[RMDB]
Chemical mapping of a 207-nucleotide RNA with DMS and 2A3. 2A3 is a SHAPE reagent: it acylates the 2'-hydroxyl of flexible nucleotides of all four kinds. DMS adducts were read by reverse transcription with MarathonRT. The RNA was probed in 150 mM KOAc, 10 mM MgCl2 and 150 mM bicine (pH 8.5) at 24 C. The 2A3 profile rests on 1,847 reads.
RNA sequence: GGGAACGACUCGAGUAGAGUCGAAAAAGAUCCACGCUACGGCGUGGUUCACACGUUCAUCCCUAUUGGGACGGAAGUAGGCAUAGUGCCGAAGGAACGCAUUAGUCAUGCGCUACGGCGCAUGACACACAUCAGAGUCACUUCGGUGACUCUGAAACACUUCAUGACUCUUCGGAGUCAUGAAGUGAAAAGAAACAACAACAACAAC
Reactivity to DMS in 0.01 (KOAc 150mM, MgCl2 10mM, bicine 150mM(pH8.5), 24C), signal-to-noise 1, nucleotides 027 to 156: a070g000a070u000c000c000a060c000g000c010u000a060c260g090g000c010g110u000g010g010u000u000c000a250c090a040c010g000u000u010c030a260u000c010c000c010u000a190u000u000g010g010g000a030c000g040g030a050a090g000u000a170g000g000c030a130u000a160g010u050g000c000c020g000a110a170g070g000a130a110c020g000c050a080u040u000a050g000u020c100a060u000g020c000g030c000u020a120c300g160g040c010g010c000a000u010g010a000c000a030c080a030c030a100u000c010a030g010a040g030u000c020a020c000u000u050c270g080g000u000g000a040c000u010c000u000g000a020a020a080
Reactivity to 2A3 in 0.01 (KOAc 150mM, MgCl2 10mM, bicine 150mM(pH8.5), 24C), signal-to-noise 3, nucleotides 027 to 156: a000g020a000u030c000c000a000c000g000c010u030a030c260g080g000c020g000u020g000g000u000u010c000a040c000a000c000g010u020u000c000a000u010c010c000c010u180a300u150u300g000g000g000a000c010g000g020a020a040g020u020a030g030g000c050a130u130a240g200u190g170c000c010g000a000a000g040g020a010a020c020g000c040a120u100u110a020g010u010c000a000u010g000c010g000c010u000a030c270g090g000c000g000c000a000u000g020a000c000a000c000a010c000a090u060c010a000g000a000g010u010c000a000c000u020u100c250g050g000u000g000a000c000u000c000u000g000a000a000a000